[RMDB]
RNA sequence: GGGAACGACUCGAGUAGAGUCGAAAAGAUAUGGAUGGAGGCGCAUGCGAGGUUCCUCGGAAACGAGGAACUCCCCACCGCAUGAACUACGCUGAGGUCCUAAGUCAAACUGCCGUUCGCGGCAGAAUCCUGACAUAACGUUCGCGUUAUGUCAGGAAAAAGAAACAACAACAACAAC
Reactivity to DMS in 0.01 (KOAc 150mM, MgCl2 10mM, bicine 150mM(pH8.5), 24C), signal-to-noise 2, nucleotides 027 to 126: g010a040u010a300u010g010g020a030u000g000g010a300g000g000c030g010c000a000u000g010c000g000a100g010g000u000u010c010c000u000c010g000g000a070a070a120c010g080a050g010g010a000a000c000u000c030c050c000c030a300c050c000g000c000a020u000g000a060a050c160u000a200c080g010c020u000g000a300g000g000u000c000c000u010a070a050g000u000c060a050a070a300c000u000g000c000c000g000u000u010c200g050c020g000g000c000a010g000a030a050
Reactivity to 2A3 in 0.01 (KOAc 150mM, MgCl2 10mM, bicine 150mM(pH8.5), 24C), signal-to-noise 1, nucleotides 027 to 126: g000a050u160a060u240g020g010a020u050g090g040a050g030g000c010g000c020a020u020g010c010g020a010g000g000u010u030c010c010u000c000g030g010a080a080a030c010g000a010g000g000a000a000c000u010c020c000c010c000a020c000c030g010c020a020u000g010a030a110c060u120a060c110g020c010u020g010a040g030g100u030c000c020u010a170a030g050u000c020a100a000a110c030u000g010c010c010g050u080u100c300g020c030g110g040c000a000g000a000a030